[RMDB]
RNA sequence: GGGAACGACUCGAGUAGAGUCGAAAAGUGUAGCGUCACUUUGAUGGCGGUACUAUGAAUUGAUGCAAUGUGUGGAGCGACCUUAAACAGUUCUGGUGGUGCUCUGAAUGGAGUGCUCUACUGAGAUUUAACUUAUGCACGUUCGCGUGCAUAAGAACACAAGUAGUUGGUUCGCCAACUACUUGUGAAAAGAAACAACAACAACAAC
Reactivity to DMS in 0.01 (KOAc 150mM, MgCl2 10mM, bicine 150mM(pH8.5), 24C), signal-to-noise 2, nucleotides 027 to 156: g030u000g010u000a050g020c020g010u000c030a030c000u000u000u010g030a140u000g010g000c020g000g020u000a050c020u000a070u000g000a090a130u000u000g030a120u000g010c050a090a060u010g010u020g020u010g010g000a120g050c040g020a130c050c020u010u000a120a090a150c060a060g000u000u000c050u000g010g010u000g030g020u000g020c020u000c010u000g010a080a100u010g000g000a070g050u000g010c000u000c010u000a060c010u000g010a110g010a180u000u000u010a060a190c000u010u000a010u000g010c020a010c000g010u010u000c300g030c020g030u000g020c000a000u010a000a020g010a100a160
Reactivity to 2A3 in 0.01 (KOAc 150mM, MgCl2 10mM, bicine 150mM(pH8.5), 24C), signal-to-noise 6, nucleotides 027 to 156: g060u040g020u030a050g110c020g020u030c000a020c080u220u140u190g220a290u080g040g000c010g010g080u020a020c040u030a060u130g080a100a060u110u100g040a050u080g070c040a040a050u030g050u020g010u040g070g010a030g020c040g010a050c000c010u090u140a080a080a030c040a070g020u060u050c060u070g050g020u020g010g020u030g020c020u000c010u030g070a040a060u160g020g010a030g000u060g010c010u010c010u030a030c040u080g030a040g050a160u010u140u210a030a020c000u000u000a010u000g000c000a000c010g010u020u040c190g010c000g050u010g000c000a000u000a000a000g000a010a000